[RMDB]
RNA sequence: GGGAACGACUCGAGUAGAGUCGAAAAUUUAUGGAGUACAUGAGAUGUUUUGAUACGGGCAUCCAAUGUGAAAUAAGUACAUCAUGGAGAAUGUUGAGUAGACUUUUUCUACUACAGUAUUAUAACAUAGAACAGUUUCUCAAAUUCCUAAGUGAGAUAGUCCGUAUUAUUUCGAUAAUACGGACUAAAAAGAAACAACAACAACAAC
Reactivity to DMS in 0.01 (KOAc 150mM, MgCl2 10mM, bicine 150mM(pH8.5), 24C), signal-to-noise 3, nucleotides 027 to 156: u000u000u000a110u000g000g010a200g020u010a080c070a080u010g010a190g020a070u000g010u010u000u000u010g030a090u010a050c030g030g020g040c060a040u000c030c040a100a080u000g010u010g010a090a110a100u010a040a180g020u000a060c070a100u010c030a080u000g020g020a300g000a040a040u000g010u000u000g000a080g010u010a100g010a060c180u000u010u020u000u000c010u010a030c010u000a070c050a080g030u000a030u000u000a070u010a030a060c010a040u000a060g030a060a060c160a100g010u000u000u000c010u000c010a010a030a120u000u000c010c010u010a080a150g000u010g000a070g010a220
Reactivity to 2A3 in 0.01 (KOAc 150mM, MgCl2 10mM, bicine 150mM(pH8.5), 24C), signal-to-noise 2, nucleotides 027 to 156: u120u130u070a110u150g030g030a040g050u080a010c020a060u090g010a010g040a080u020g020u010u030u140u130g050a040u060a050c020g040g000g000c010a010u000c010c000a040a080u050g000u020g060a070a130a130u140a180a010g040u040a040c010a070u090c010a020u050g040g020a080g080a190a030u060g020u110u040g020a010g010u040a000g010a030c070u120u140u140u120u060c000u010a020c010u040a090c020a020g010u030a000u060u020a040u000a050a010c000a010u030a030g070a050a040c060a050g000u040u150u020c000u000c000a010a120a060u020u020c000c010u070a090a070g170u150g140a100g050a050